[RMDB]
The record gives the reactivity of an RNA of 177 nucleotides to DMS and 2A3.
RNA sequence: GGGAACGACUCGAGUAGAGUCGAAAAGGGGACGGAGCAAAAGGAUCCCCAGCGCUCUCUGACUCGCGAGCGCAUUCGCGAGCACCUCGCUGCCACCGCGACAGUGCCGCGGCCGCUGGAGGUGGCGCAGUCGUGGCACUUUCGAGUGCCACGACUGAAAAGAAACAACAACAACAAC
Reactivity to DMS in 0.01 (KOAc 150mM, MgCl2 10mM, bicine 150mM(pH8.5), 24C), signal-to-noise 2, nucleotides 027 to 126: g010g000g010g000a010c050g010g020a090g010c130a060a100a150a160g000g000a140u010c010c000c000c000a100g020c040g010c030u000c030u000c080u040g020a230c010u010c010g010c070g000a020g000c290g000c110a070u020u020c000g000c000g010a110g000c020a040c010c100u000c000g000c030u000g000c000c050a150c020c040g010c000g010a030c300a150g000u030g000c040c000g000c010g020g000c050c300g010c030u020g000g010a070g060g000u000g010g010c020g010
Reactivity to 2A3 in 0.01 (KOAc 150mM, MgCl2 10mM, bicine 150mM(pH8.5), 24C), signal-to-noise 4, nucleotides 027 to 126: g000g000g000g010a020c070g060g080a170g100c130a070a070a080a070g120g010a170u040c010c000c000c010a020g010c010g000c000u020c010u020c080u110g110a160c010u030c040g000c000g010a010g030c100g030c120a060u080u040c010g000c010g000a000g030c030a040c000c000u020c000g110c080u080g000c010c010a030c030c010g000c000g050a050c040a110g110u090g090c020c010g010c000g020g010c030c050g000c040u090g070g000a000g000g000u010g000g000c020g030

DMS adducts were read by reverse transcription with MarathonRT. For 2A3, 2,888 sequencing reads were counted. 2A3 adducts were read by reverse transcription with SuperScript II with manganese.